[RMDB]
RNA sequence: GGGAACGACUCGAGUAGAGUCGAAAAUCGGCUGUGCCAGUUGACUGGGUACCAACUGGGAGAACCACCUGGUCAAUCCAUGGAAAGGGAGAAUGGAUGACCACUGAGGACAUGCUCAUGGUGUGGAGCUUUAGCCCUAUUUCGAUAGGGCUAAAGCAAAAGAAACAACAACAACAAC
Reactivity to DMS in 0.01 (KOAc 150mM, MgCl2 10mM, bicine 150mM(pH8.5), 24C), signal-to-noise 4, nucleotides 027 to 126: u000c110g020g000c060u010g010u020g010c030c020a050g010u020u000g000a080c060u020g010g000g000u020a100c100c010a070a060c030u000g000g000g000a100g010a100a120c120c030a060c050c050u040g000g030u000c020a110a050u020c010c010a000u020g000g010a090a100a130g020g010g010a110g010a150a020u000g020g010a040u000g010a020c020c010a110c120u000g010a060g000g000a140c110a090u040g010c000u010c010a060u000g000g010u000g000u000g000g010a120
Reactivity to 2A3 in 0.01 (KOAc 150mM, MgCl2 10mM, bicine 150mM(pH8.5), 24C), signal-to-noise 9, nucleotides 027 to 126: u100c010g020g000c020u050g030u090g110c000c000a020g000u010u020g040a060c070u090g040g020g070u090a060c040c010a020a040c030u030g010g020g020a100g040a050a050c000c000a010c010c020u020g000g010u010c040a100a190u000c020c000a010u050g070g080a130a180a160g120g030g020a070g070a050a020u020g000g010a010u000g020a010c000c010a020c050u050g020a040g010g030a050c040a100u170g010c020u020c030a050u110g060g020u070g010u040g050g050a030